[RMDB]
RNA sequence: GGGAACGACUCGAGUAGAGUCGAAAAGCGCGGAAAUAAACGCGUGUCGAAGCCUGUUCUAGAGCUUGCUUCGAUGCGCAGGUGUCGGUUGAUGUGUAUCAUCAAGUGACAUAGAACAGGCGAAGAAGGGAAUUGUAUACUUCGGUAUACAAUUCCCAAAAGAAACAACAACAACAAC
Reactivity to 2A3 in 0.01 (KOAc 150mM, MgCl2 10mM, bicine 150mM(pH8.5), 24C), signal-to-noise 5, nucleotides 027 to 126: g030c010g000c030g050g100a180a210a080u250a030a180a050c010g000c000g000u020g050u010c030g040a040a000g000c000c000u000g000u020u010c020u050a060g020a030g110c000u020u020g000c030u110u130c180g070a090u140g080c060g000c020a000g000g050u080g010u040c040g020g140u070u020g040a010u010g090u040g070u060a090u250c000a000u000c000a000a020g260u010g040a010c000a040u000a000g000a000a000c000a000g000g070c030g000a000a000g020a050a060
Reactivity to DMS in 0.01 (KOAc 150mM, MgCl2 10mM, bicine 150mM(pH8.5), 24C), signal-to-noise 3, nucleotides 027 to 126: g030c000g030c000g020g000a060a090a140u070a070a060a060c030g010c010g040u000g020u010c020g000a150a300g000c020c010u000g010u010u000c000u000a050g020a230g000c000u000u000g000c010u030u010c230g010a060u010g030c140g000c010a010g000g020u010g000u010c000g000g000u000u020g010a020u010g060u000g010u030a130u050c000a020u000c000a000a000g000u000g020a010c010a100u000a000g030a010a030c000a030g000g000c000g050a080a280g000a090a120